[RMDB]
RNA sequence: GGGAACGACUCGAGUAGAGUCGAAAAGAUCAAAGAAUCAUCAGGAAGCCAAAUCAGGAUGUUAUGUGGAUUAUGCCAGCCGACCAUUGACAUGCCCACUGUACGUGAGAAAUUGCGCAAUGCUGAAGAGCUUACUCUGUUUCGACAGAGUAAGCUCAAAAGAAACAACAACAACAAC
Reactivity to DMS in 0.01 (KOAc 150mM, MgCl2 10mM, bicine 150mM(pH8.5), 24C), signal-to-noise 2, nucleotides 027 to 126: g000a110u000c070a040a160a100g000a100a140u030c020a070u020c060a100g010g000a070a080g000c020c060a020a060a170u010c080a100g000g000a060u000g000u040u010a050u020g000u030g000g000a070u000u020a030u020g000c010c030a050g020c000c070g020a060c030c010a120u000u020g000a000c040a030u000g020c080c020c020a050c010u010g010u020a010c010g010u000g000a050g000a020a090a120u000u000g030c020g020c150a010a030u000g000c040u000g000a080a090
Reactivity to 2A3 in 0.01 (KOAc 150mM, MgCl2 10mM, bicine 150mM(pH8.5), 24C), signal-to-noise 2, nucleotides 027 to 126: g020a030u040c030a000a110a030g070a140a090u120c020a050u000c020a000g000g150a060a010g010c000c070a000a100a140u100c040a060g080g040a050u030g080u130u070a060u130g140u060g010g000a080u030u090a050u160g000c030c000a000g000c000c000g020a050c000c010a010u000u040g050a020c010a060u050g000c000c000c000a020c010u080g040u150a090c080g040u040g000a070g120a050a110a050u060u000g000c030g000c010a030a120u250g030c050u010g040a180a080